[RMDB]
RNA sequence: GGGAACGACUCGAGUAGAGUCGAAAAACGAUGGGCGGACAGACCGCGCUCAACACCGCGCUUUCCUUGCGCCGCAUGGGCGUGCUUGAACGUUAUAACGUCGAGAUGAUCGGCGCCAAGGCCGAAAUGCAUUAAUUAGUUUCGACUAAUUAAUGCAAAAAGAAACAACAACAACAAC
Reactivity to DMS in 0.01 (KOAc 150mM, MgCl2 10mM, bicine 150mM(pH8.5), 24C), signal-to-noise 9, nucleotides 027 to 126: a100c080g010a070u000g010g010g010c040g010g010a160c090a090g000a100c140c040g010c020g010c010u010c020a050a080c140a170c130c110g010c020g000c030u000u010u000c090c100u000u000g010c010g020c020c070g010c170a100u000g000g000g010c020g020u000g010c080u000u010g000a070a100c030g010u000u010a100u010a110a130c010g010u000c010g000a080g010a110u000g000a130u000c010g010g000c000g020c070c120a070a090g000g010c090c030g000a040a100a120
Reactivity to 2A3 in 0.01 (KOAc 150mM, MgCl2 10mM, bicine 150mM(pH8.5), 24C), signal-to-noise 6, nucleotides 027 to 126: a000c050g020a060u070g000g040g000c010g020g010a020c030a040g060a030c010c030g000c010g010c020u000c010a040a080c040a010c030c010g000c000g020c020u090u160u110c040c030u050u090g010c010g000c000c020g050c040a050u040g000g000g020c010g010u010g010c000u040u050g060a080a020c010g020u050u080a170u080a220a030c010g000u000c020g010a040g020a130u150g020a050u070c010g000g000c010g010c040c030a050a010g070g000c010c000g000a090a080a000

An RNA of 177 nucleotides, treated with DMS and 2A3 and read out base by base.